[RMDB]
An RNA of 207 nucleotides, treated with 2A3 and DMS and read out base by base.

RNA sequence: GGGAACGACUCGAGUAGAGUCGAAAAUUAAUGAAGCAAAUCUCCAAACGCCAACGAUGAGCGUUUCGCAAUCGCCGCAUAAGGCUUUUGCCGAGGCUGCUUGAGCCUUGUUACCAAAGAAAAGCCGAAAACCCAAAUGUCUUCGGACAUUUGGGAAGUUAUACGUAUUGUUCGCAAUACGUAUAACAAAAGAAACAACAACAACAAC
Reactivity to 2A3 in 0.01 (KOAc 150mM, MgCl2 10mM, bicine 150mM(pH8.5), 24C), signal-to-noise 6, nucleotides 027 to 156: u160u100a040a100u130g080a070a030g040c050a090a090a150u040c070u050c050c050a060a040a010c020g000c020c010a130a070c150g150a210u150g020a050g040c010g000u020u040u070c030g000c010a010a030u020c020g010c020c000g080c120a130u080a260a100g000g000c000u000u010u000u010g010c010c010g010a010g010g000c040u070g000c000u060u040g010a000g000c000c000u000u030g040u080u140a070c030c020a020a020a010g040a020a060a010a000g010c020c020g070a060a060a050a060c000c000c000a000a000a010u000g000u000c010u020u060c100g070g000a000c000a000u000u010u000g000g010g000a000a000
Reactivity to DMS in 0.01 (KOAc 150mM, MgCl2 10mM, bicine 150mM(pH8.5), 24C), signal-to-noise 2, nucleotides 027 to 156: u000u010a050a100u010g000a110a090g030c030a070a030a080u010c030u020c020c030a060a150a050c020g040c020c010a130a100c090g010a090u000g000a100g020c000g000u000u000u000c070g030c010a100a070u000c080g020c020c030g000c130a110u000a080a150g010g010c000u000u010u000u010g030c040c040g000a090g020g040c020u000g020c090u000u010g010a080g020c030c010u000u010g030u000u010a240c070c070a060a130a140g010a050a090a040a060g020c030c040g020a050a050a070a130c000c000c000a000a030a020u010g020u000c020u000u000c300g030g010a020c010a020u000u000u010g010g000g000a000a010
DMS adducts were read by reverse transcription with MarathonRT. The DMS profile rests on 4,490 reads. Source: RMDB library M2RFPK, as collected in RNAgym.